RNA sequence: GGGAACGACUCGAGUAGAGUCGAAAAGAUAUGGAAAUGGACAGGCAACAGCGUGGGUGUCGGAAACGACAUUACGACAUGCCUGUUCCAUUUCCUAAGUCAAAAGAGGACGGUUCGCCGUCCUCAACAGGGUAAGCUAGUUCGCUAGCUUACCCUGAAAAGAAACAACAACAACAAC
Reactivity to 2A3 in 0.01 (KOAc 150mM, MgCl2 10mM, bicine 150mM(pH8.5), 24C), signal-to-noise 1, nucleotides 027 to 126: g020a020u070a020u190g000g010a030a000a000u000g000g020a000c000a000g000g010c010a110a040c080a300g220c070g030u070g090g240g030u020g000u010c010g030g030a050a050a050c010g000a000c010a000u000u110a010c010g080a060c000a020u150g030c000c000u000g030u000u020c000c000a000u000u000u000c000c000u000a000a000g020u020c010a000a030a020a050g000a010g000g000a000c000g000g080u020u130c290g010c070c000g020u000c000c000u000c000a010a010
Reactivity to DMS in 0.01 (KOAc 150mM, MgCl2 10mM, bicine 150mM(pH8.5), 24C), signal-to-noise 2, nucleotides 027 to 126: g000a010u000a300u020g000g000a000a020a000u000g000g000a060c010a030g020g010c010a050a110c300a290g000c000g000u010g000g000g030u010g020u020c000g010g020a120a180a140c020g010a020c010a010u010u000a010c000g010a030c090a250u010g010c010c000u000g000u000u010c000c000a020u000u000u000c000c000u000a020a050g000u020c040a080a060a110a130g000a010g020g000a020c020g010g000u010u010c260g010c000c000g010u000c000c000u000c000a020a040

Conditions: 150 mM KOAc, 10 mM MgCl2 and 150 mM bicine (pH 8.5), 24 C. Chemical mapping of a 177-nucleotide RNA with 2A3 and DMS. For 2A3, 2,863 sequencing reads were counted. The data come from the RNA Mapping Database (RMDB), library TTRDES.